[RMDB]
RNA sequence: GGGAACGACUCGAGUAGAGUCGAAAAAGAUCCACGCUACGGCAUGGAUCACACGUUCAUCCCUAUUGGGACGGAAGUAGGCAUAGUGCCGAAGGAACGCAUUAGUCAUGCGCUACGGCGCAUGACACACAUCAGAGUCACUUCGGUGACUCUGAAACCUCCAUCACUCCUUCGGGAGUGAUGGAGGAAAAGAAACAACAACAACAAC
Reactivity to 2A3 in 0.01 (KOAc 150mM, MgCl2 10mM, bicine 150mM(pH8.5), 24C), signal-to-noise 1, nucleotides 027 to 156: a010g000a000u000c000c000a010c010g030c000u030a070c220g150g000c020a000u010g000g000a000u040c000a020c030a000c020g020u000u000c040a060u070c030c000c000u150a300u270u300g060g000g000a000c020g030g030a090a000g030u000a030g010g030c110a140u110a240g200u180g120c000c000g000a000a000g000g030a020a020c010g040c000a010u260u000a060g000u000c000a000u010g000c000g000c000u030a040c300g090g020c000g000c000a000u000g020a000c000a020c000a000c030a070u030c000a000g000a000g010u000c000a000c020u040u060c160g060g000u000g000a000c000u000c000u000g000a000a000a000